Notes:
This 177-nucleotide RNA was probed chemically with DMS and 2A3. DMS adducts were read by reverse transcription with MarathonRT.
RNA sequence: GGGAACGACUCGAGUAGAGUCGAAAAUAAAAGGAGGAGGAGAAAUAUAGCGCGAGAUCGGUCCUCCCACGCGCGUCUCGCGCUGAUAAGCGGAAUAACAGGAUGAUUAAUAGAUAGCGCGCAAAAAGUAACAUUAAUUCUUCGGAAUUAAUGUUACAAAAGAAACAACAACAACAAC
Reactivity to DMS in 0.01 (KOAc 150mM, MgCl2 10mM, bicine 150mM(pH8.5), 24C), signal-to-noise 4, nucleotides 027 to 126: u000a070a090a100a120g000g020a060g010g010a060g000g010a070g010a090a100a090u000a100u000a050g010c010g010c000g010a020g000a030u010c060g000g000u000c050c060u010c040c010c030a050c100g010c080g030c070g010u010c020u000c010g010c010g010c000u000g000a070u000a080a080g010c040g010g000a070a040u000a060a090c120a040g000g000a060u000g010a080u000u010a040a090u010a090g010a070u000a050g010c030g020c020g000c200a050a050a030a070a060
Reactivity to 2A3 in 0.01 (KOAc 150mM, MgCl2 10mM, bicine 150mM(pH8.5), 24C), signal-to-noise 2, nucleotides 027 to 126: u130a000a070a020a040g040g040a030g010g010a000g050g040a060g080a080a170a020u230a050u080a110g020c000g000c000g010a000g000a040u050c030g050g040u000c000c010u000c000c020c000a020c010g090c000g010c020g010u000c020u010c000g000c010g000c010u000g000a030u000a000a040g030c020g030g060a110a060u080a120a030c040a040g110g030a080u060g020a010u110u220a090a100u050a060g030a030u070a010g030c010g010c000g010c010a080a040a000a030a000
Conditions: 150 mM KOAc, 10 mM MgCl2 and 150 mM bicine (pH 8.5), 24 C. Source: RMDB library M2PK90, as collected in RNAgym.